The record gives the reactivity of an RNA of 170 nucleotides to DMS and 2A3. The RNA was probed in 150 mM KOAc, 10 mM MgCl2 and 150 mM bicine (pH 8.5) at 24 C.

RNA sequence: GGGAACGACUCGAGUAGAGUCGAAAAGUUAAAGAGACUGUUGUUCAGUUUAAUUAUCGUAGAGACGGUCAACCAUUCUACGAGCGGUUUCCCCUCUGCGCUUUUACAAAUCUAGAUAAGUUGAAGUACGGACAGAGCUUCGGCUCUGUCAAAAGAAACAACAACAACAAC
Reactivity to DMS in 0.01 (KOAc 150mM, MgCl2 10mM, bicine 150mM(pH8.5), 24C), signal-to-noise 3, nucleotides 027 to 129: g060u010u010a020a010a190g040a090g000a020c040u000g040u000u000g050u050u030c040a170g020u000u000u000a140a020u030u030a000u020c000g000u020a060g000a020g040a120c000g040g040u060c240a090a110c020c030a120u020u020c060u030a070c070g050a040g000c070g050g040u000u000u000c000c000c000c000u030c120u060g070c060g020c020u000u000u090u000a090c140a000a060a110u060c170u040a120g010a120u050a050a140g070u000u000g030a000a000g060u020a100c210g020
Reactivity to 2A3 in 0.01 (KOAc 150mM, MgCl2 10mM, bicine 150mM(pH8.5), 24C), signal-to-noise 2, nucleotides 027 to 129: g040u060u110a140a010a000g150a010g030a000c080u030g110u090u080g130u120u120c160a060g010u000u050u070a090a030u060u110a090u030c010g000u000a000g000a000g000a030c020g100g000u150c030a030a040c020c020a050u100u000c010u000a000c100g000a040g030c020g100g000u000u000u000c000c000c000c000u110c090u070g000c040g000c040u000u010u020u000a040c060a000a150a000u000c050u090a050g030a190u070a070a090g010u050u040g040a020a030g000u070a040c100g070
For 2A3, 1,869 sequencing reads were counted.